Chemical mapping of a 177-nucleotide RNA with 2A3 and DMS. 2A3 is a SHAPE reagent: it acylates the 2'-hydroxyl of flexible nucleotides of all four kinds. 2A3 adducts were read by reverse transcription with SuperScript II with manganese. For DMS, 14,612 sequencing reads were counted. The reactions ran in a buffer of 150 mM KOAc, 10 mM MgCl2 and 150 mM bicine (pH 8.5), at 24 C. Reactivities are given for positions 27 through 126. The 2A3 profile rests on 10,228 reads.

[RMDB]
RNA sequence: GGGAACGACUCGAGUAGAGUCGAAAAUACCUUUUCAUCUAAACCUUUGCACGAGUAAUUAAAGAUCCGCUUGACGAGCCUAUAUGGAAGAGCGUGCCAGGUAUUUGACUUAAGGACUGUUAGUAACGAUUAGUACUAUGUUCGCAUAGUACUAAUCAAAAGAAACAACAACAACAAC
Reactivity to 2A3 in 0.01 (KOAc 150mM, MgCl2 10mM, bicine 150mM(pH8.5), 24C), signal-to-noise 8, nucleotides 027 to 126: u060a000c000c000u010u030u030u050c030a030u010c020u180a100a060a080c010c000u020u030u190g000c000a000c010g040a070g110u180a230a170u100u080a040a050a020g050a160u080c120c020g020c060u130u170g010a010c000g010a000g010c000c010u140a130u030a030u300g020g010a040a030g080a030g300c000g000u000g000c000c030a000g000g000u010a040u000u020u010g000a010c020u050u060a010a010g020g020a040c050u070g090u200u090a100g060u060a100a010c070
Reactivity to DMS in 0.01 (KOAc 150mM, MgCl2 10mM, bicine 150mM(pH8.5), 24C), signal-to-noise 9, nucleotides 027 to 126: u010a130c010c000u000u000u000u000c020a020u000c020u000a040a030a020c020c000u000u000u010g010c000a020c010g000a050g010u020a090a090u010u000a010a020a020g000a140u000c150c030g030c010u010u000g010a050c010g000a020g000c010c010u000a040u000a030u010g010g010a020a010g000a090g010c000g010u000g010c000c300a020g000g010u000a020u000u000u000g010a020c290u010u000a030a030g010g010a170c160u000g000u010u010a070g010u010a080a110c180